[RMDB]
RNA sequence: GGGAACGACUCGAGUAGAGUCGAAAAGUUGCCGACGAACCUUCCAACCUUCCAAACGUCGUUUUCGACAACCUUCCAACCAUCCAAUCUACUCGAGAGGAGGAGGAGGAGGAGGAGGAGGAAUUAAGACUAAUUAUGUAUUCGUACAUAAUUAGUCAAAAGAAACAACAACAACAAC
Reactivity to DMS in 0.01 (KOAc 150mM, MgCl2 10mM, bicine 150mM(pH8.5), 24C), signal-to-noise 5, nucleotides 027 to 126: g030u000u000g010c060c030g000a080c120g010a110a090c040c020u000u000c030c030a100a120c070c020u000u000c020c050a060a090a170c130g010u000c020g020u000u000u000u000c010g010a030c030a100a120c060c030u000u000c030c040a060a100c080c040a080u000c030c050a050a160u010c020u010a050c080u000c040g010a020g010a300g000g010a110g000g000a140g010g000a150g020g050a160g020g010a100g010g010a140g000g000a130g000g000a250a070u010u000a060a100
Reactivity to 2A3 in 0.01 (KOAc 150mM, MgCl2 10mM, bicine 150mM(pH8.5), 24C), signal-to-noise 7, nucleotides 027 to 126: g070u070u080g140c040c000g000a040c030g030a060a070c010c010u040u000c030c020a110a100c040c020u080u040c040c000a090a100a070c050g010u010c020g010u040u020u040u110c020g020a020c010a060a040c010c020u100u030c030c010a070a090c020c010a080u030c020c010a060a070u000c000u050a050c020u040c040g020a020g010a020g030g040a040g010g030a040g020g030a070g020g020a070g030g070a040g010g070a030g020g060a030g030g040a040a060u170u120a180a010